[RMDB]
RNA sequence: GGGAACGACUCGAGUAGAGUCGAAAAAGUUCUAGUCCUCACCUAAGAUCAGACUAACAUGGCCCUCAAAGUAAGAGCACUGGGUUGGGCUUUGUGGUGGGGAUAAGUGUCUCAUUUUUAGUCCCAAAUUAAAAACGAGAUUUUGGGCUGUACAUCAUGAUUUUACUCGUUUCGACGAGUAAAAUCAAAAAGAAACAACAACAACAAC
Reactivity to DMS in 0.01 (KOAc 150mM, MgCl2 10mM, bicine 150mM(pH8.5), 24C), signal-to-noise 1, nucleotides 027 to 156: a050g010u000u000c020u000a230g000u000c020c010u000c020a050c000c000u000a080a100g020a100u010c060a080g010a070c070u000a060a100c060a050u020g010g010c020c010c010u010c060a090a100a150g010u000a050a130g010a040g010c050a030c080u000g000g010g000u020u000g020g020g010c000u000u000u000g060u010g000g010u000g010g000g030g040a040u000a010a060g010u000g010u000c010u000c000a060u000u010u000u020u010a060g030u000c040c100c070a020a080a180u010u020a020a020a020a020a060c020g000a050g000a130u000u000u000u000g000g000g030c030u000g030u000a050c110a140u010c090a220